[RMDB]
RNA sequence: GGGAACGACUCGAGUAGAGUCGAAAAAGUACCGUUCGCGGUACUGAGCAGAUAUGGACGUACUCCCCACCGACGACAGAACUUGGAUUUAUCGGAAACGAUUGUCAGUUCUAAGUCGAGGUACGUCCUAAGUCGAUAGCCGUGUUUCGACACGGAAGACAAUCUAUUAGUUCGCUAAUAGAUUGUCAAAAGAAACAACAACAACAAC
Reactivity to 2A3 in 0.01 (KOAc 150mM, MgCl2 10mM, bicine 150mM(pH8.5), 24C), signal-to-noise 9, nucleotides 027 to 156: a000g010u000a010c000c010g020u030u070c300g000c020g110g000u010a000c000u010g010a060g060c120a040g050a120u140a130u220g000g000a000c000g000u000a000c010u170c050c030c010c020a010c020c000g000a010c010g020a020c040a110g000a000a000c010u140u280g090g010a050u250u300u170a030u090c010g030g030a110a040a040c020g000a010u000u040g010u010c010a000g000u000u000c010u020a050a020g000u000c000g000a000g000g000u000a000c010g000u000c000c000u000a020a010g050u080c050g090a140u180a100g030c000c000g010u010g000u010u160u120c170g030a020c000a000c010g000g000a020a010
Reactivity to DMS in 0.01 (KOAc 150mM, MgCl2 10mM, bicine 150mM(pH8.5), 24C), signal-to-noise 5, nucleotides 027 to 156: a010g010u000a010c010c000g040u000u010c250g040c020g050g020u000a010c010u000g000a130g010c110a160g030a170u000a130u000g020g010a030c010g010u010a020c030u000c050c030c030c050a300c150c040g000a070c020g010a240c300a030g010a010a010c000u000u010g040g000a070u000u000u000a020u000c000g030g000a150a070a210c020g010a020u000u000g000u000c000a070g000u000u000c000u010a100a300g020u000c010g010a200g000g000u000a010c010g000u000c000c000u000a010a110g000u010c030g000a170u000a100g030c000c000g020u010g000u000u000u010c280g020a130c000a030c000g010g010a060a080